Structure probing data (DMS and 2A3) for a 177-nucleotide construct.
RNA sequence: GGGAACGACUCGAGUAGAGUCGAAAAGUCAGUCAACUAGCAGGACCCGGAAAAGCUAGUGACUGACAAAUCGGGUCCAGCUCAGAAAAUAAAGUAUCCGAUAAGGAUACAAAAGAAAAGUGAGCAAAAAUUACUAGCGGUUCGCCGCUAGUAAUUUAAAAGAAACAACAACAACAAC
Reactivity to DMS in 0.01 (KOAc 150mM, MgCl2 10mM, bicine 150mM(pH8.5), 24C), signal-to-noise 2, nucleotides 027 to 126: g010u000c020a030g000u000c010a100a050c020u000a010g010c060a230g010g050a110c090c020c030g030g040a090a060a180a200g000c000u000a020g000u010g060a000c000u000g010a000c110a010a000a040u050c070g000g000g000u020c000c030a160g010c010u010c020a050g000a170a120a140a040u000a040a110a230g000u010a000u000c000c000g010a140u090a160a090g000g000a000u000a000c000a050a070a130a170g020a020a130a220a070g060u000g020a000g000c020a050a080
Reactivity to 2A3 in 0.01 (KOAc 150mM, MgCl2 10mM, bicine 150mM(pH8.5), 24C), signal-to-noise 2, nucleotides 027 to 126: g010u000c000a010g000u000c030a060a060c060u010a000g020c040a070g020g150a110c030c010c040g110g010a230a220a010a000g010c000u000a020g000u000g000a000c000u000g000a050c010a020a060a000u150c020g030g000g000u040c090c000a020g000c000u000c000a010g160a070a160a020a000u200a030a220a030g000u010a000u010c000c010g050a050u160a300a030g000g000a000u010a000c010a010a070a000a000g070a000a070a000a000g080u000g010a000g000c080a020a030
Background:
Values are in units of 0.01, from 0 to 300, in steps of 10. The RNA was probed in 150 mM KOAc, 10 mM MgCl2 and 150 mM bicine (pH 8.5) at 24 C. 2A3 adducts were read by reverse transcription with SuperScript II with manganese. It was measured as part of the RMDB library OK1LIB.